[RMDB]
RNA sequence: GGGAACGACUCGAGUAGAGUCGAAAACAAAAAUGCUCAACAGUAUUGUCAUGUUAUAUAUUAAUUCUGAAUAUUAUGAGUAUUCCAUUAAUAUGCUAAAGUAUUACACCUACUUUAACUGUAUGCCACCGAUUUAAUCAUUCGUGAUUAAAUCGGUAAAAGAAACAACAACAACAAC
Reactivity to 2A3 in 0.01 (KOAc 150mM, MgCl2 10mM, bicine 150mM(pH8.5), 24C), signal-to-noise 7, nucleotides 027 to 126: c080a000a100a040a030a010u060g010c000u030c020a030a110c020a100g030u030a050u120u110g080u070c030a080u070g040u150u090a140u040a060u010a030u220u210a110a030u140u030c030u030g010a010a030u030a040u170u120a120u160g000a010g010u010a020u030u000c020c010a030u090u110a070a080u130a050u170g010c010u030a040a010a020g010u010a030u040u160a070c070a040c040c030u010a010c010u030u010u020a060a030c020u060g040u120a050u120g090c020c000
Reactivity to DMS in 0.01 (KOAc 150mM, MgCl2 10mM, bicine 150mM(pH8.5), 24C), signal-to-noise 3, nucleotides 027 to 126: c130a060a070a130a080a020u020g010c020u010c070a090a110c150a090g020u010a020u020u000g000u010c030a060u020g010u010u010a050u010a090u040a080u010u000a020a040u010u030c080u040g000a010a000u010a000u000u000a120u010g000a110g000u000a020u000u000c000c090a060u020u000a030a010u020a020u010g010c060u000a000a010a060g010u000a030u020u030a070c200a100c280c190u000a000c000u010u010u000a020a040c030u000g060u000a000u020g010c140c140